[RMDB]
RNA sequence: GGGAACGACUCGAGUAGAGUCGAAAAAGAUAGUUUGCAUAACUUUGGGAUUUUCCAGAGAGAGGAUGAAAACGGUGGCCCUCCUUGUAAUGUCUAGGCACAUGGGACAUCCAGUGGAACUGUUGAGGGAGGAGAUGGGAGGGAGACCAGUCACCAAUAAAAUUAGGACUUUCGAGUCCUAAUUUUAAAAAGAAACAACAACAACAAC
Reactivity to 2A3 in 0.01 (KOAc 150mM, MgCl2 10mM, bicine 150mM(pH8.5), 24C), signal-to-noise 3, nucleotides 027 to 156: a000g080a070u160a030g040u070u040u130g100c080a080u110a190a090c030u040u080u130g010g010g070a150u200u160u110u140c020c030a020g030a000g000a000g010a010g060g020a040u130g030a070a080a060a010c090g040g000u020g050g010c000c000c010u000c020c000u060u050g050u150a100a120u060g030u070c030u050a020g000g100c080a060c030a100u080g010g000g010a020c030a030u080c030c000a010g030u010g050g050a060a040c050u070g070u180u060g060a040g020g030g020a050g000g000a090g010a010u080g000g000g010a040g000g030g010a020g000a000c030c000a000g030u070c020a050c040c010a030a050
Reactivity to DMS in 0.01 (KOAc 150mM, MgCl2 10mM, bicine 150mM(pH8.5), 24C), signal-to-noise 2, nucleotides 027 to 156: a230g020a100u000a080g020u030u000u000g000c070a130u000a070a140c020u000u010u000g020g020g020a270u020u000u000u010c030c010a050g010a120g000a180g000a100g000g010a070u010g010a060a020a100a070c030g000g030u000g020g000c010c020c000u000c040c010u000u000g050u000a100a090u020g030u000c040u000a070g000g030c100a040c030a070u000g010g020g000a050c020a060u010c020c020a080g030u020g000g000a160a120c060u000g020u000u010g010a170g010g000g000a070g010g000a050g030a100u000g010g000g020a130g010g020g000a070g020a070c030c040a080g000u000c020a110c010c000a050a300